This 177-nucleotide RNA was probed chemically with DMS and 2A3.
The DMS profile rests on 816 reads.
The reactions ran in a buffer of 150 mM KOAc, 10 mM MgCl2 and 150 mM bicine (pH 8.5), at 24 C.
The data come from the RNA Mapping Database (RMDB), library OK2TRN.
RNA sequence: GGGAACGACUCGAGUAGAGUCGAAAAAGAACUAACUAACCCACCGUAUCAUGAAAUGGCGCUUGAGGGGCUGAAGACUCGACCCGCUGUUCCGUAUAAGGUCGAAACAAUAGGAGUAAUAGGCACACCACAGUGAUUCUUUCGAGAAUCACUGUGGAAAAGAAACAACAACAACAAC
Reactivity to DMS in 0.01 (KOAc 150mM, MgCl2 10mM, bicine 150mM(pH8.5), 24C), signal-to-noise 2, nucleotides 027 to 126: a070g000a120a170c140u000a080a080c180u030a090a150c030c020c030a150c120c080g010u000a020u020c130a080u000g010a030a080a100u000g000g010c040g000c140u020u010g010a080g030g010g030g000c030u040g000a080a140g010a100c060u000c010g000a050c080c060c020g020c200u000g000u010u000c020c050g030u010a060u000a080a070g010g010u000c060g000a090a100a060c140a020a060u000a070g000g010a060g000u010a010a060u000a100g020g000c040a060c170a140
Reactivity to 2A3 in 0.01 (KOAc 150mM, MgCl2 10mM, bicine 150mM(pH8.5), 24C), signal-to-noise 1, nucleotides 027 to 126: a020g070a060a080c110u080a020a030c000u040a050a070c030c010c000a020c000c040g120u090a040u190c040a030u140g130a040a100a150u040g070g000c030g000c050u040u050g040a060g000g060g010g000c060u120g040a060a010g010a000c040u000c030g010a030c020c030c000g000c000u030g020u040u000c040c020g040u030a090u010a090a030g040g000u020c020g100a060a030a000c070a060a140u060a080g050g000a020g070u060a030a040u040a030g100g020c010a000c010a010